[RMDB]
An RNA of 207 nucleotides, treated with 2A3 and DMS and read out base by base.
For 2A3, 2,392 sequencing reads were counted.
2A3 adducts were read by reverse transcription with SuperScript II with manganese.
The reactions ran in a buffer of 150 mM KOAc, 10 mM MgCl2 and 150 mM bicine (pH 8.5), at 24 C.

RNA sequence: GGGAACGACUCGAGUAGAGUCGAAAAUUAGGCGUUCGCGCCUAAACCAAGCGUACUACACUCAGUGGCAAGAGGAUGGUAUCCCAAAUAGGAUACCUAUCGACUCUUGAACUACCACGGGAGAGUGUAUCGCACUAAUGCAUUUUUCGAAAUGCAAUCAACCCUUUUCUUUCGAGAAAAGGGUUGAAAAAGAAACAACAACAACAAC
Reactivity to 2A3 in 0.01 (KOAc 150mM, MgCl2 10mM, bicine 150mM(pH8.5), 24C), signal-to-noise 3, nucleotides 027 to 156: u030u000a000g000g000c000g060u050u100c300g020c010g000c070c020u010a020a000a010c010c010a110a050g030c000g050u110a100c090u000a000c020a000c000u000c020a010g010u000g030g000c000a000a000g010a000g000g040a020u030g020g000u000a000u020c030c060c070a190a180a140u300a110g020g000a000u000a000c000c020u120a100u030c030g070a050c000u000c000u000u000g000a000a000c030u120a050c010c010a010c030g000g080g040a240g000a040g020u040g000u000a020u160c020g010c010a030c050u190a080a100u100g000c000a000u020u040u040u040u130c100g110a030a010a000u080g030c100a030a090
Reactivity to DMS in 0.01 (KOAc 150mM, MgCl2 10mM, bicine 150mM(pH8.5), 24C), signal-to-noise 1, nucleotides 027 to 156: u010u000a010g030g010c000g030u000u010c300g120c010g000c010c000u000a010a050a130c040c050a110a110g040c010g050u000a040c110u000a030c000a010c000u010c000a120g000u020g030g000c030a060a010g010a030g020g020a280u000g000g010u000a000u010c000c000c030a010a090a300u000a040g010g010a000u000a000c010c050u000a050u000c030g010a180c010u000c010u010u000g000a060a130c070u010a100c000c010a030c030g000g000g030a210g000a030g020u010g000u000a030u000c050g030c010a150c090u010a130a150u020g000c010a000u000u010u000u000u030c240g040a020a030a010u010g000c010a050a230